[RMDB]
An RNA of 177 nucleotides, treated with DMS and 2A3 and read out base by base. The reactions ran in a buffer of 150 mM KOAc, 10 mM MgCl2 and 150 mM bicine (pH 8.5), at 24 C. For DMS, 31,463 sequencing reads were counted.
RNA sequence: GGGAACGACUCGAGUAGAGUCGAAAAGCACAUUUACACAGAUAUCCUGGAAAAUGUGAUGCUGCCAUAUGGCAGGGAUGAAAUGCCGUUGGUUUGGACAUUUCAAAAGGAUAACGACUCAAAACACAUUUAUCGAUUUAUUCGUAAAUCGAUAAAUAAAAGAAACAACAACAACAAC
Reactivity to DMS in 0.01 (KOAc 150mM, MgCl2 10mM, bicine 150mM(pH8.5), 24C), signal-to-noise 9, nucleotides 027 to 126: g010c010a010c010a010u000u000u010a030c240a150c030a010g000a170u060a070u020c140c000u000g010g000a060a010a010a000u000g010u000g000a070u020g000c020u000g010c000c010a200u040a070u040g000g030c000a010g020g010g000a170u010g000a010a030a030u000g000c010c000g010u010u020g010g010u010u030u030g010g010a080c040a030u010u010u000c010a040a050a090a070g010g010a080u010a060a110c110g010a080c080u020c100a090a050a090a080c200a070c170
Reactivity to 2A3 in 0.01 (KOAc 150mM, MgCl2 10mM, bicine 150mM(pH8.5), 24C), signal-to-noise 9, nucleotides 027 to 126: g030c000a000c000a020u020u020u050a120c150a010c010a040g060a100u080a030u180c010c000u000g010g010a020a020a000a010u010g000u000g020a080u090g040c010u000g000c000c010a190u170a150u300g010g000c000a000g020g030g050a050u130g020a020a020a010u010g010c010c020g050u110u160g110g080u110u130u110g040g010a070c010a010u010u010u000c030a080a080a010a020g110g010a050u110a170a040c050g080a040c030u040c130a030a100a090a040c120a020c010